[RMDB]
RNA sequence: GGGAACGACUCGAGUAGAGUCGAAAAUCUACAUAGUUCGCUAUGUAGAAAAACGCGCUCGCGCGCGCACGCGCUCACUCUCGCACACGCACGCGCACGCAAAAACGUUGCGGUUCGCCGCAACGAAGAACAGCUUGAAGUUCGCUUCAAGCUGUUCAAAAGAAACAACAACAACAAC
Reactivity to DMS in 0.01 (KOAc 150mM, MgCl2 10mM, bicine 150mM(pH8.5), 24C), signal-to-noise 1, nucleotides 027 to 126: u000c010u000a010c000a000u000a000g010u000u000c220g020c040u000a000u000g000u000a010g000a000a060a010a090a160c070g010c020g030c280u010c050g020c030g000c000g000c000g030c030a050c180g000c030g000c260u000c140a040c100u000c040u020c050g040c000a100c090a070c110g000c000a060c010g000c000g020c090a100c020g010c010a100a080a150a130a170c040g000u000u040g020c000g020g000u000u010c170g000c000c000g030c030a040a000c000g000a050a100
Reactivity to 2A3 in 0.01 (KOAc 150mM, MgCl2 10mM, bicine 150mM(pH8.5), 24C), signal-to-noise 1, nucleotides 027 to 126: u000c000u020a020c000a000u000a000g010u040u050c190g040c110u000a000u000g000u020a030g000a030a040a000a000a000c050g000c020g000c060u060c140g000c010g010c030g000c010g000c020a010c060g020c000g020c030u090c060a150c060u110c000u030c030g000c010a010c020a020c170g000c000a000c000g000c000g000c020a000c010g000c010a030a020a000a030a080c000g000u000u000g000c010g030g050u040u050c250g030c060c010g000c000a020a010c010g030a030a000